[RMDB]
RNA sequence: GGGAACGACUCGAGUAGAGUCGAAAACGAGCACAUGCGUGCGGAAGGCAGAAACAUAACGACGUUACGCCACGCGUCAAGCCGCUGCUUCAUAAAUUAAGUGGAAUAUAUUCCUUUACGGCUACAACUUUCUCUUUGGUUUCGACCAAAGAGAAAGAAAAGAAACAACAACAACAAC
Reactivity to DMS in 0.01 (KOAc 150mM, MgCl2 10mM, bicine 150mM(pH8.5), 24C), signal-to-noise 4, nucleotides 027 to 126: c030g000a120g000c030a040c000a100u030g020c110g010u010g000c000g000g010a090a050g000g000c060a030g000a130a080a100c170a100u040a140a110c130g010a030c020g000u010u010a100c060g010c020c040a020c120g000c020g010u020c020a120a110g000c030c020g000c010u000g010c010u000u020c170a120u050a050a090a110u030u030a080a060g020u010g000g000a070a050u010a100u010a140u000u010c020c010u000u010u060a150c060g000g010c020u000a080c200a080a230
Reactivity to 2A3 in 0.01 (KOAc 150mM, MgCl2 10mM, bicine 150mM(pH8.5), 24C), signal-to-noise 9, nucleotides 027 to 126: c030g020a020g060c020a020c010a090u270g080c080g070u040g010c030g030g020a090a070g090g000c040a020g080a060a150a020c070a090u230a120a020c110g050a020c040g040u060u090a060c100g030c050c010a010c030g000c000g020u010c020a030a020g000c000c010g020c030u010g010c000u060u060c070a110u150a300a150a070u260u150a110a060g080u080g050g070a080a010u160a010u030a100u130u060c010c000u050u080u060a030c030g010g000c010u040a040c040a120a050